[RMDB]
RNA sequence: GGGAACGACUCGAGUAGAGUCGAAAACAAAGGUCUCCUGGGCUGGUUCUAAAAUCAUUGCUGUUAUCUACAGCGGCAGGGAGUCUCUAAUAUUCCCAUCGGGAACCUAUUACUGUGUCACCACUAAACCGCGCUUUGUUCGCAAAGCGCAAAAGAAACAACAACAACAAC
Reactivity to DMS in 0.01 (KOAc 150mM, MgCl2 10mM, bicine 150mM(pH8.5), 24C), signal-to-noise 3, nucleotides 027 to 129: c090a030a300a100g010g000u010c090u040c020c010u030g020g030g030c000u000g020g030u040u040c210u060a000a000a000a000u040c060a000u070u030g040c010u040g030u050u040a150u070c190u090a040c080a000g010c000g010g060c100a230g020g030g020a000g020u000c020u110c040u000a010a030u050a100u040u020c040c000c050a120u080c110g030g050g050a120a020c000c010u050a090u060u050a100c110u000g060u010g010u060c030a090c110c000a080c150u020a020a060a050c000c000
Reactivity to 2A3 in 0.01 (KOAc 150mM, MgCl2 10mM, bicine 150mM(pH8.5), 24C), signal-to-noise 6, nucleotides 027 to 129: c030a010a120a000g000g000u010c000u000c010c010u020g000g220g000c000u040g010g010u090u100c090u210a040a090a060a080u110c030a060u050u190g000c000u010g020u050u080a140u120c090u100a010c020a010g010c000g010g000c010a010g020g010g010a020g000u010c020u000c000u040a060a100u050a070u140u010c010c010c010a020u080c030g020g000g040a010a030c000c000u020a060u110u110a070c060u040g020u040g030u050c040a040c060c020a010c010u080a060a070a020c040c050